An RNA of 207 nucleotides, treated with DMS and 2A3 and read out base by base.
It was measured as part of the RMDB library OK3TST.
Conditions: 150 mM KOAc, 10 mM MgCl2 and 150 mM bicine (pH 8.5), 24 C.
RNA sequence: GGGAACGACUCGAGUAGAGUCGAAAACAAGGAGCAGUGGAAAAUGUUGCGUCAUUGAGUAAUGCGUAUUUGGCUUUCUCUGGUAAGGCUCCGACAACAGAUCUAGCUACUAUGAGCGUGAACUUGCAAAACAUCAUGUUUACAAAUGAAAAUACAACGCAUAAGUGGUUUUCGAACCACUUAUGCGAAAAGAAACAACAACAACAAC
Reactivity to DMS in 0.01 (KOAc 150mM, MgCl2 10mM, bicine 150mM(pH8.5), 24C), signal-to-noise 2, nucleotides 027 to 156: c060a060a080g040g010a090g020c030a130g030u000g020g030a070a050a140a170u010g020u000u000g000c000g010u000c030a110u000u020g050a080g040u000a070a070u010g070c090g010u000a100u000u000u020g000g010c000u000u000u000c010u000c010u020g000g000u000a100a190g000g010c010u000c010c000g000a140c010a030a080c030a060g000a070u000c040u000a020g010c030u010a030c110u020a080u010g030a070g020c050g000u000g020a040a040c100u000u000g010c010a040a090a020a250c050a190u000c040a130u000g020u010u000u000a140c070a070a040a050u000g000a090a020a070a060u030a050c050a090a170
Reactivity to 2A3 in 0.01 (KOAc 150mM, MgCl2 10mM, bicine 150mM(pH8.5), 24C), signal-to-noise 4, nucleotides 027 to 156: c030a030a080g020g000a030g030c060a050g070u180g060g070a060a050a070a080u120g050u130u080g030c020g090u170c100a060u090u180g080a080g100u250a090a030u070g010c000g020u000a130u080u070u190g050g010c000u000u060u030c030u020c000u040g100g040u130a050a030g090g000c000u000c030c000g010a000c010a040a000c010a010g020a030u030c010u040a010g050c000u010a060c010u080a110u240g100a030g010c040g010u030g010a010a070c020u030u080g020c060a030a040a060a140c020a050u110c010a020u100g090u070u180u120a050c060a060a100a030u120g020a070a020a040a100u240a060c080a160a010